[RMDB]
RNA sequence: GGGAACGACUCGAGUAGAGUCGAAAAGAAGUUGGUCUCGUGGACUCAGCCACAUUUGAAAGAGCAACUAAUGCUGUGAUUAGUUUGCUACUAUCGCUUGGAUUUGCUGAUAGACAUUAUGUAACAGGAAUUACCUCGGUUUCGACCGAGGUAAUUCAAAAGAAACAACAACAACAAC
Reactivity to 2A3 in 0.01 (KOAc 150mM, MgCl2 10mM, bicine 150mM(pH8.5), 24C), signal-to-noise 1, nucleotides 027 to 126: g180a120a020g000u160u120g100g030u080c090u060c010g000u030g000g000a010c000u000c100a030g090c090c040a040c000a030u070u120u260g180a210a150a030g100a010g000c000a000a000c010u000a000a000u110g080c130u170g050u110g190a000u000u000a000g090u080u030u050g030c040u230a300c030u070a130u030c000g000c040u050u010g120g040a110u210u010u090g000c040u190g030a060u010a110g030a030c070a040u080u300a140u200g180u160a070a110c040a060g160
Reactivity to DMS in 0.01 (KOAc 150mM, MgCl2 10mM, bicine 150mM(pH8.5), 24C), signal-to-noise 1, nucleotides 027 to 126: g010a110a090g030u000u000g000g010u000c000u000c090g010u030g000g000a090c190u020c070a050g000c000c190a090c100a090u000u000u010g000a070a070a060g000a070g000c000a010a020c000u000a030a020u000g010c060u000g000u000g010a090u000u010a010g020u000u010u010g030c020u000a090c000u000a080u000c030g000c040u000u010g000g000a170u030u000u000g010c010u010g010a010u000a050g040a160c100a080u010u000a060u030g040u030a060a150c110a120g010